Source: RMDB library OK2TST, as collected in RNAgym. Chemical mapping of a 177-nucleotide RNA with 2A3 and DMS. DMS adducts were read by reverse transcription with MarathonRT. High DMS reactivity at an A or C suggests that its Watson-Crick edge is free. The reactions ran in a buffer of 150 mM KOAc, 10 mM MgCl2 and 150 mM bicine (pH 8.5), at 24 C. For 2A3, 4,649 sequencing reads were counted.

RNA sequence: GGGAACGACUCGAGUAGAGUCGAAAAGCGGUCUAUUUUUCGGUUUUGCCCGCCUGUGAGGCAGCCUUAGCGCAUAGCAAUUGGCAUGAGGUGGUCAAAAAUGAGCGUGCCAUGCAGGCACUGGAGAAAAACCAUGGUUAUUCGUAACCAUGGUUUUAAAAGAAACAACAACAACAAC
Reactivity to 2A3 in 0.01 (KOAc 150mM, MgCl2 10mM, bicine 150mM(pH8.5), 24C), signal-to-noise 4, nucleotides 027 to 126: g040c030g010g010u050c060u090a160u070u110u010u050u080c030g050g000u000u020u070u120g040c040c000c010g000c020c000u050g040u050g060a070g080g000c020a010g000c010c010u000u070a040g000c060g000c100a090u110a060g000c020a070a180u120u100g030g010c020a030u050g050a030g170g300u100g020g000u070c020a020a020a030a020a070u130g030a070g080c050g010u040g000c000c010a090u190g050c040a040g010g010c000a020c070u050g070g060a090g090a060
Reactivity to DMS in 0.01 (KOAc 150mM, MgCl2 10mM, bicine 150mM(pH8.5), 24C), signal-to-noise 8, nucleotides 027 to 126: g020c070g010g010u010c080u000a060u010u000u000u000u000c060g010g010u000u000u010u000g010c030c010c040g010c040c020u000g010u010g000a100g010g020c040a150g000c030c020u000u000a150g010c080g010c170a090u010a110g020c060a080a160u010u000g010g010c020a070u000g010a060g000g020u000g000g010u000c040a020a040a040a060a080u010g000a090g010c110g010u000g010c010c010a100u010g020c120a100g000g000c020a040c050u000g000g000a150g000a070